[RMDB]
RNA sequence: GGGAACGACUCGAGUAGAGUCGAAAAAGGCCAGCAGCUGGCAGGGAACCGCCGCCACCCAGUACGUGGCUGCCCAUGGCCCCUAUCUGGCCUGGCUUGAGCAAACCGCGAUCAACAGCGCCGUCACUACUACUUUCUGUUUCGACAGAAAGUAGUAAAAAGAAACAACAACAACAAC
Reactivity to DMS in 0.01 (KOAc 150mM, MgCl2 10mM, bicine 150mM(pH8.5), 24C), signal-to-noise 9, nucleotides 027 to 126: a030g010g000c010c000a010g010c210a100g030c050u020g010g010c290a090g000g000g010a110a090c080c120g020c030c060g020c010c030a050c060c060c110a120g020u030a090c220g010u000g000g000c030u010g000c020c130c100a080u050g000g000c100c000c090c020u000a080u020c040u000g000g000c020c010u010g010g000c040u010u010g000a110g020c090a060a070a100c040c030g000c030g000a110u020c060a060a090c080a080g000c020g020c020c020g010u010c060a080c150
Reactivity to 2A3 in 0.01 (KOAc 150mM, MgCl2 10mM, bicine 150mM(pH8.5), 24C), signal-to-noise 9, nucleotides 027 to 126: a000g030g000c010c000a010g040c030a020g010c040u050g020g000c010a030g030g010g010a080a060c040c030g010c010c020g000c010c010a020c010c030c020a050g080u130a060c100g010u030g010g000c000u020g010c000c010c010a140u160g050g000c000c000c000c000u080a120u140c030u030g020g000c000c010u010g010g000c000u040u100g030a030g030c050a070a040a040c020c020g000c020g040a060u090c050a030a070c010a060g020c010g010c040c010g060u060c020a020c090
The record gives the reactivity of an RNA of 177 nucleotides to DMS and 2A3. For DMS, 23,941 sequencing reads were counted. For 2A3, 26,135 sequencing reads were counted. The RNA was probed in 150 mM KOAc, 10 mM MgCl2 and 150 mM bicine (pH 8.5) at 24 C. Values cover nucleotides 27 to 126.